The record gives the reactivity of an RNA of 177 nucleotides to 2A3 and DMS. Values cover nucleotides 27 to 126. It was measured as part of the RMDB libraries RFM100 and RFMREP. For DMS the reverse transcriptase was MarathonRT. 2A3 is a SHAPE reagent: it acylates the 2'-hydroxyl of flexible nucleotides of all four kinds. High DMS reactivity at an A or C suggests that its Watson-Crick edge is free.
RNA sequence: GGGAACGACUCGAGUAGAGUCGAAAAAGGAAUUACGGCUCCUUUUUUGUGGAUACAAUCUCUUGUAUACGAUAUACUUAUUGUUAAUUUCAUUGACCUUUACGCAAUCCUGCGUAAAUGCUGGUAUCAAUAUCCAACCAUUCGUGGUUGGAUAUUGAAAAGAAACAACAACAACAAC
Reactivity to 2A3 in 0.01 (KOAc 150mM, MgCl2 10mM, bicine 150mM(pH8.5), 24C), signal-to-noise 8, nucleotides 027 to 126: a010g050g000a040a030u110u070a080c050g050g000c030u000c000c000u010u010u000u010u010u050g050u030g060g020a030u030a140c020a030a050u020c060u020c000u150u070g040u030a040u010a060c140g030a060u050a030u010a250c040u090u080a050u090u050g030u060u080a170a120u100u070u120c050a050u020u060g100a110c010c000u020u020u010a010c000g020c000a040a200u200c040c110u130g000c010g010u000a010a010a010u120g020c020u030g030g040u050a030u050
Reactivity to DMS in 0.01 (KOAc 150mM, MgCl2 10mM, bicine 150mM(pH8.5), 24C), signal-to-noise 3, nucleotides 027 to 126: a010g010g000a070a040u010u020a110c220g010g010c050u000c000c000u000u000u000u000u010u020g000u000g000g020a050u010a040c030a010a040u010c090u010c070u020u010g010u010a030u000a130c170g020a140u010a040u000a040c030u000u000a080u000u010g000u000u010a140a110u020u010u000c040a070u000u000g000a140c030c000u000u010u000a000c000g020c000a060a100u050c250c180u000g000c000g030u020a000a010a040u000g000c060u020g000g010u020a110u000